This 307-nucleotide RNA was probed chemically with 2A3 and DMS. DMS adducts were read by reverse transcription with MarathonRT. The RNA was probed in 150 mM KOAc, 10 mM MgCl2 and 150 mM bicine (pH 8.5) at 24 C. For 2A3 the reverse transcriptase was SuperScript II with manganese.

RNA sequence: GGGAACGACUCGAGUAGAGUCGAAAAGUUAGCGUGAGCUAACAAGUGUUCGUGAGAACACAGAAGACGUACGCGUCUUCAACGUCUAUUGGACCCGAAACCGAUCGAUCUAGCGACGUGCAGGUCUGACUUUAAUCAGGACCGAACCCGUGUCUGUUGCAAGAGACUGGGAUGACACGUGGCUAGGGGUGAAAGGCCAAUCAAGUUCGGUAAUAGCUGGUUUUCUGCGAAAUCUAUUCAGGUAAAGAGUGUGUACUAAGACCAUUAGGCCUGGAUUCGUCCAGGCCAAAAGAAACAACAACAACAAC
Reactivity to 2A3 in 0.01 (KOAc 150mM, MgCl2 10mM, bicine 150mM(pH8.5), 24C), signal-to-noise 3, nucleotides 027 to 266: g000u000u000a010g000c040g010u090g070a010g020c000u000a000a010c020a030a030g020u020g010u010u010c030g020u040g100a120g010a010a000c010a000c010a010g000a010a010g010a010c030g030u070a030c190g020c000g150u010c000u000u000c000a020a020c040g030u030c020u020a050u050u060g110g160a250c000c000c020g040a040a000a000c020c010g060a100u190c060g030a020u070c030u000a000g000c070g130a000c010g000u010g030c030a010g010g000u000c000u000g020a040c010u130u200u200a090a090u130c050a020g060g110a040c000c000g010a060a080c000c000c010g140u080g070u020c020u020g260u220u210g130c150a160a060g020a010g010a130c050u110g020g010g010a000u070g060a050c000a000c000g000u000g020g010c000u010a000g000g000g020g010u000g030a110a020a000g020g010c010c000a000a010u050c040a050a040g060u100u060c020g020g020u080a090a060u070a130g030c030u060g050g060u100u000u040u040c090u090g030c050g070a120a080a030u020c010u050a100u070u170c030a040g040g050u110a060a120a030g050a070g030u100g020u030g010u040a030c010u150a070a120g110a010c040c010a030u000u000a000
Reactivity to DMS in 0.01 (KOAc 150mM, MgCl2 10mM, bicine 150mM(pH8.5), 24C), signal-to-noise 5, nucleotides 027 to 266: g000u000u000a000g010c010g000u020g010a200g000c000u000a010a010c000a130a110g010u010g000u000u000c010g010u030g000a210g010a020a010c000a010c020a150g010a030a020g010a010c020g010u010a070c180g040c020g020u000c000u000u000c020a160a140c150g010u010c050u010a060u000u000g010g010a130c030c010c010g010a140a240a080c040c010g020a140u020c150g010a240u020c010u000a010g010c000g010a000c000g010u000g020c050a270g010g010u010c010u000g000a070c180u020u020u020a150a170u010c060a090g000g000a030c000c000g000a210a230c000c010c000g010u000g010u000c000u000g020u000u030g010c220a130a130g000a020g000a030c020u010g010g000g010a110u010g010a200c010a000c010g010u000g000g000c000u000a000g000g000g000g000u000g000a040a160a170g000g010c030c020a040a050u010c150a090a090g000u000u000c040g000g010u000a070a080u000a080g010c080u000g000g000u020u000u000u010c040u000g000c060g000a040a100a070u010c050u000a100u010u010c070a030g000g010u000a030a080a070g000a050g010u000g000u000g000u010a040c080u000a070a080g000a130c050c060a060u010u000a100
The DMS profile rests on 13,429 reads. It was measured as part of the RMDB library POS240.